[RMDB]
RNA sequence: GGGAACGACUCGAGUAGAGUCGAAAAACGGUAGAAAAGAGCGAGCCCUCCGAUCCGAUGGGGCCCUGGACCCCUCAGCUCUGGAGACUUCCGACCUGUGAGGUCGAGGAUUCCCCGUGGAGGGAGAUAGGGACAGCGUUCGCGCUGUCCAAAAGAAACAACAACAACAAC
Reactivity to DMS in 0.01 (KOAc 150mM, MgCl2 10mM, bicine 150mM(pH8.5), 24C), signal-to-noise 6, nucleotides 027 to 129: a110c040g020g010u040a060g000a070a040a050a060g010a000g060c030g010a010g030c010c060c010u020c040c040g040a110u000c010c070g030a070u000g020g100g020g000c300c040c000u040g030g020a070c000c010c020c000u020c000a060g030c200u010c020u000g050g010a110g020a190c230u080u010c030c010g000a030c150c010u010g080u000g020a060g000g020u000c010g010a050g050g010a060u000u000c010c010c000c040g030u060g040g000a050g020g030g010a040g020a000u050a050g020
Reactivity to 2A3 in 0.01 (KOAc 150mM, MgCl2 10mM, bicine 150mM(pH8.5), 24C), signal-to-noise 4, nucleotides 027 to 129: a000c060g000g040u080a060g080a040a090a050a010g060a030g030c020g020a040g000c010c020c010u040c010c000g100a210u020c020c010g050a060u110g010g000g000g000c000c000c000u000g050g030a010c010c010c000c000u030c000a010g010c010u030c050u120g030g010a050g060a140c110u230u000c000c000g000a030c000c000u030g010u040g050a050g010g000u000c020g040a010g000g000a000u120u190c000c000c010c020g040u040g010g000a000g010g030g000a020g000a000u160a040g050
An RNA of 170 nucleotides, treated with DMS and 2A3 and read out base by base. For 2A3 the reverse transcriptase was SuperScript II with manganese. For DMS the reverse transcriptase was MarathonRT. The reactions ran in a buffer of 150 mM KOAc, 10 mM MgCl2 and 150 mM bicine (pH 8.5), at 24 C. Reactivities are given for positions 27 through 129. For 2A3, 10,023 sequencing reads were counted.